[RMDB]
RNA sequence: GGGAACGACUCGAGUAGAGUCGAAAACUGUACUAUGAAUUGAUGCAAGGUGUGGAGCGACCUUAAACAGUUCUGGUGGUGCUCUGAAUGGAGUGCUCUACUGAGAUUAUAAAAUAGAAGGUAAGCUGAAGGGGAAAUGAGUUCGCUCAUUUCCCAACCGUAUACUAGUCUUCGGACUAGUAUACGGAAAAGAAACAACAACAACAAC
Reactivity to 2A3 in 0.01 (KOAc 150mM, MgCl2 10mM, bicine 150mM(pH8.5), 24C), signal-to-noise 7, nucleotides 027 to 156: c020u000g060u140a040c050u090a100u190g030a050a040u100u060g060a050u070g090c040a050a010g020g000u030g020u080g050g020a020g000c020g010a010c010c000u050u080a060a090a010c020a030g010u030u000c010u040g020g020u030g010g010u020g000c010u000c010u050g150a090a080u280g030g000a010g020u040g000c000u010c010u040a050c020u040g040a020g010a070u080u110a050u180a140a070a080a020u100a040g070a040a010g050g020u050a020a070g020c040u070g130a060a050g000g010g000g000a000a000a010u000g000a000g020u020u070c130g040c070u000c000a000u000u000u000c000c000c000a000a000
Reactivity to DMS in 0.01 (KOAc 150mM, MgCl2 10mM, bicine 150mM(pH8.5), 24C), signal-to-noise 1, nucleotides 027 to 156: c040u000g040u010a070c020u000a110u000g020a060a130u000u030g020a120u010g040c100a070a080g000g030u040g040u010g010g020a060g010c030g010a070c030c050u000u010a080a090a110c060a050g010u000u000c040u000g020g010u000g010g010u000g020c010u010c040u010g080a100a140u000g020g020a100g020u000g020c010u000c040u000a050c000u010g010a080g010a080u000u010a100u000a020a050a040a120u010a080g000a160a080g010g020u010a050a060g040c020u000g010a070a140g000g000g040g010a010a010a010u010g010a020g020u000u000c290g030c020u000c020a030u000u000u000c010c010c000a000a010

Chemical mapping of a 207-nucleotide RNA with 2A3 and DMS. 2A3 is a SHAPE reagent: it acylates the 2'-hydroxyl of flexible nucleotides of all four kinds. DMS adducts were read by reverse transcription with MarathonRT. The RNA was probed in 150 mM KOAc, 10 mM MgCl2 and 150 mM bicine (pH 8.5) at 24 C. Source: RMDB library M2RFPK, as collected in RNAgym.